[RMDB]
RNA sequence: GGGAACGACUCGAGUAGAGUCGAAAAGUUCGCAUGGUGAACUAUUGUGUUAUUAGUAACUAAGUAAGCUUACAAUCGAAAAUGUUUAACCAUAAAAGGGUAAAAUGGUGUAAGACAGUCUGAUACUUUACGGCUUCACGUUUCGACGUGAAGCCAAACCAAUCUUCAGGUUCGCCUGAAGAUUGGUAAAAGAAACAACAACAACAAC
Reactivity to 2A3 in 0.01 (KOAc 150mM, MgCl2 10mM, bicine 150mM(pH8.5), 24C), signal-to-noise 1, nucleotides 027 to 156: g060u070u040c030g010c260a080u150g180g000u040g040a010a000c010u050a100u030u200g080u020g000u000u000a080u050u020a100g050u000a090a000c010u010a060a110g100u060a120a020g130c000u030u030a000c100a050a190u090c030g050a100a050a030a100u070g010u050u090u070a000a050c000c000a000u100a210a110a050a170g020g000g000u020a030a090a030a000u050g070g000u020g000u090a000a010g010a030c000a020g000u070c110u030g030a030u040a120c030u000u040u110a070c030g000g000c000u000u000c000a020c020g000u000u160u160c120g130a000c000g010u010g000a000a000g000c000c000a000a000
Reactivity to DMS in 0.01 (KOAc 150mM, MgCl2 10mM, bicine 150mM(pH8.5), 24C), signal-to-noise 1, nucleotides 027 to 156: g000u000u000c030g040c030a130u000g040g090u020g000a040a070c020u000a020u010u000g030u020g030u010u000a110u010u000a130g000u000a030a110c060u010a050a130g020u000a080a120g020c020u000u000a000c020a170a210u010c040g000a040a140a060a060u000g000u000u020u040a040a040c000c020a070u010a070a040a190a160g000g010g000u010a040a020a030a080u010g010g030u010g000u000a020a030g010a060c090a090g020u000c040u000g000a170u010a030c090u000u000u000a180c100g000g020c030u000u010c000a000c000g070u000u000u000c250g030a040c010g020u000g000a000a000g000c020c000a000a000
The data come from the RNA Mapping Database (RMDB), library M2RFPK. Chemical mapping of a 207-nucleotide RNA with 2A3 and DMS. 2A3 adducts were read by reverse transcription with SuperScript II with manganese. The RNA was probed in 150 mM KOAc, 10 mM MgCl2 and 150 mM bicine (pH 8.5) at 24 C.